Conditions: 150 mM KOAc, 10 mM MgCl2 and 150 mM bicine (pH 8.5), 24 C. Structure probing data (DMS and 2A3) for a 177-nucleotide construct. It was measured as part of the RMDB library OK2TST. High DMS reactivity at an A or C suggests that its Watson-Crick edge is free.
RNA sequence: GGGAACGACUCGAGUAGAGUCGAAAAGCGACCCAACUGAUGGAAGACUUUUUCCUGAGCCUUCUCGCGGAUUGAGCAGGUGUUCAGCAGCAGCACAUCCGCUUCUUCCGCCACGUCGGUCAGUUGAGUGUUGAAUCAGAUUCGUCUGAUUCAACACAAAAGAAACAACAACAACAAC
Reactivity to DMS in 0.01 (KOAc 150mM, MgCl2 10mM, bicine 150mM(pH8.5), 24C), signal-to-noise 4, nucleotides 027 to 126: g000c150g020a180c030c050c010a040a040c020u000g010a030u000g000g000a020a020g010a050c030u000u000u000u000u000c060c050u000g010a030g000c000c010u000u000c010u000c260g010c010g000g000a030u000u000g000a010g030c020a050g010g010u000g000u000u010c090a140g020c050a050g000c090a110g000c140a030c010a030u000c000c040g000c010u000u000c040u000u000c000c020g020c020c200a060c170g000u000c180g000g010u000c020a020g000u000u000g010a180
Reactivity to 2A3 in 0.01 (KOAc 150mM, MgCl2 10mM, bicine 150mM(pH8.5), 24C), signal-to-noise 4, nucleotides 027 to 126: g060c030g080a100c010c000c010a010a010c020u010g020a030u080g030g030a020a010g090a150c050u100u070u020u100u060c030c040u040g030a020g020c000c000u020u020c070u040c050g000c010g020g020a030u030u050g010a020g020c030a020g000g030u020g020u060u070c040a090g000c020a020g020c030a010g000c010a050c000a030u000c010c010g000c000u020u010c010u010u010c000c010g000c010c010a060c080g170u110c060g040g020u000c000a020g020u030u070g060a060